[RMDB]
An RNA of 207 nucleotides, treated with 2A3 and read out base by base. 2A3 adducts were read by reverse transcription with SuperScript II with manganese. The 2A3 profile rests on 2,172 reads. Values cover nucleotides 27 to 156. It was measured as part of the RMDB library RNAMAK.
RNA sequence: GGGAACGACUCGAGUAGAGUCGAAAAGGGGUCCCAUACAACAGCGUCGUGUUGGAGCGAAGAACAUGGCUGAAGCCUCCACGGCCAUGGGAGCUCCCACGACGACAUGUAUGGGACGGAGGCACCCAAAAGCGAUGCAACUUCGGUUGCAUCGCAACCUCCGUUUAGACUUCGGUCUAAACGGAGGAAAAGAAACAACAACAACAAC
Reactivity to 2A3 in 0.01 (KOAc 150mM, MgCl2 10mM, bicine 150mM(pH8.5), 24C), signal-to-noise 2, nucleotides 027 to 156: g020g000g030g000u010c000c020c000a010u000a000c050a230a040c100a160g300c000g010u000c000g000u000g090u110u210g040g000a000g020c000g160a290a030g010a020a000c000a000u010g000g000c020u040g060a090a020g000c000c000u000c000c000a010c030g000g010c010c000a000u000g000g000g010a000g000c000u000c000c000c000a000c010g000a010c000g020a020c000a010u080g000u000a000u000g000g000g000a000c010g000g000a000g010g000c010a040c010c000c000a050a100a010a020g010c000g000a000u010g000c010a000a020c000u060u120c280g150g000u000u000g000c000a000u000c000g000c000a000a000